[RMDB]
RNA sequence: GGGAACGACUCGAGUAGAGUCGAAAACACUUCCGUGCGAUGACGAGCAAGACGAUGAUAGACGGCGUGCCUUGUCAGAUGAGAGCAAAGCCUGGUGCAGGAUUGGCAUCAUUCAUGAGCUGACGGCAAGUGUUGCGGAAUUCGUUCCGCAACACUUAAAAGAAACAACAACAACAAC
Reactivity to 2A3 in 0.01 (KOAc 150mM, MgCl2 10mM, bicine 150mM(pH8.5), 24C), signal-to-noise 1, nucleotides 027 to 126: c020a020c030u100u000c040c020g030u040g020c050g070a080u020g040a050c000g050a000g030c000a030a000g030a000c050g020a000u070g010a070u110a100g080a030c060g000g000c070g030u040g030c000c020u000u080g030u030c020a030g000a150u070g070a100g000a000g020c020a030a030a050g010c000c000u030g020g010u180g070c050a010g050g130a100u100u240g100g000c030a010u000c000a000u130u010c080a080u060g060a020g030c050u050g100a020c000g000g000c040
Reactivity to DMS in 0.01 (KOAc 150mM, MgCl2 10mM, bicine 150mM(pH8.5), 24C), signal-to-noise 2, nucleotides 027 to 126: c080a090c130u030u000c010c030g030u010g010c060g020a120u000g010a110c080g020a090g000c000a060a110g000a070c090g000a140u010g040a130u000a110g020a140c100g020g000c030g000u000g010c080c020u000u000g010u000c040a070g010a150u000g010a130g030a090g030c050a040a070a120g000c050c080u000g000g020u000g020c040a070g000g000a120u000u010g000g000c000a090u000c020a030u000u050c090a130u010g000a240g010c010u000g000a060c040g000g010c190